[RMDB]
RNA sequence: GGGAACGACUCGAGUAGAGUCGAAAAUCGUGAUCGGUUGGUUUCGGCUUGUUGUUUAUCAUUAUUAUAAUCACGAGGUCUUUGAGCAUACUGUCCCGGCUUAUAUUCACUAGUUUGAUCAUUUGGCUUUCUCGCGCCUGCAUGUCGGGCAUUACGGAGUGAUGCGUUUAUUCGUAAACGCAUCACUAAAAGAAACAACAACAACAAC
Reactivity to 2A3 in 0.01 (KOAc 150mM, MgCl2 10mM, bicine 150mM(pH8.5), 24C), signal-to-noise 2, nucleotides 027 to 156: u170c000g010u030g010a090u050c060g110g060u040u060g030g010u020u050u200c210g030g000c080u000u000g040u000u050g010u060u000u060a080u070c030a040u000u200a020u300u040a090u010a080a040u010c000a070c040g080a130g020g040u000c010u140u050u090g060a000g030c030a010u060a160c080u120g030u100c030c040c000g000g010c030u170u010a030u030a030u190u110c010a010c030u050a040g110u150u060u010g100a100u080c130a070u030u090u130g020g010c050u160u080u000c080u060c020g060c030g020c010c000u070g060c010a060u140g010u060c030g000g000g040c010a000u050u080a060c080g010g000
Reactivity to DMS in 0.01 (KOAc 150mM, MgCl2 10mM, bicine 150mM(pH8.5), 24C), signal-to-noise 2, nucleotides 027 to 156: u000c020g030u000g020a050u000c030g020g020u000u010g010g010u000u010u010c090g020g030c060u010u000g020u000u000g020u030u010u000a120u010c090a130u010u000a150u010u010a110u010a060a030u000c040a040c060g020a100g030g020u000c050u000u000u010g010a100g000c000a100u010a030c020u000g020u000c000c010c040g020g010c050u020u000a090u000a120u020u010c070a070c050u010a100g040u000u000u000g010a060u010c060a150u000u000u000g010g000c050u000u010u000c030u000c050g010c100g010c010c020u000g040c050a150u000g020u000c070g000g030g010c010a080u000u000a090c060g000g000

An RNA of 207 nucleotides, treated with 2A3 and DMS and read out base by base. For 2A3, 563 sequencing reads were counted. In probing experiments dimethyl sulfate is read out at A N1 and C N3, which are open when not base-paired. For DMS, 6,047 sequencing reads were counted. DMS adducts were read by reverse transcription with MarathonRT. The RNA was probed in 150 mM KOAc, 10 mM MgCl2 and 150 mM bicine (pH 8.5) at 24 C.